[RMDB]
Conditions: 150 mM KOAc, 10 mM MgCl2 and 150 mM bicine (pH 8.5), 24 C. Structure probing data (DMS and 2A3) for a 207-nucleotide construct. DMS adducts were read by reverse transcription with MarathonRT. 2A3 adducts were read by reverse transcription with SuperScript II with manganese.
RNA sequence: GGGAACGACUCGAGUAGAGUCGAAAACUGUUGCGUACGGAAACCAUCCUCCAUCCGAAACGUACGUAGCUUCUGUCUUCAGCGUACGGAAACCAUCCAAGUCCUAGCCCAUCCGAAACGUACGCUGCAGAGGAUGGGAAAGCAUGCGGUGACGAGCAAAAUAUGUCCUGUUCGCAGGACAUAUUUUAAAAGAAACAACAACAACAAC
Reactivity to DMS in 0.01 (KOAc 150mM, MgCl2 10mM, bicine 150mM(pH8.5), 24C), signal-to-noise 2, nucleotides 027 to 156: c020u000g040u000u000g000c020g030u000a050c030g010g000a150a120a160c020c050a030u000c020c030u000c030c030a060u000c070c060g000a120a120a220c040g010u000a020c010g000u000a040g000c020u000u000c080u000g020u000c060u000u000c010a160g010c020g030u000a000c010g010g000a120a090a110c000c030a110u000c030c030a050a110g000u000c030c020u000a130g010c000c010c000a090u000c020c010g000a070a090a110c000g010u000a010c000g030c010u010g020c100a060g000a120g020g000a020u000g010g000g000a070a050a070g020c020a140u010g010c000g010g010u000g000a110c050g000a120g030c110
Reactivity to 2A3 in 0.01 (KOAc 150mM, MgCl2 10mM, bicine 150mM(pH8.5), 24C), signal-to-noise 3, nucleotides 027 to 156: c030u040g020u030u010g020c020g000u000a010c000g040g130a130a070a080c070c050a110u090c030c070u000c050c020a160u070c060c060g090a130a110a000c020g010u010a020c000g000u030a020g010c010u120u050c110u160g180u020c090u080u060c010a000g000c000g000u000a000c010g030g070a150a100a010c130c010a100u080c050c020a090a030g060u040c030c020u080a040g000c010c020c010a030u070c030c030g050a050a180a000c010g000u010a020c000g020c010u000g020c010a010g020a000g050g020a020u010g020g000g000a090a010a000g070c060a040u130g050c050g010g010u040g020a030c050g060a030g020c050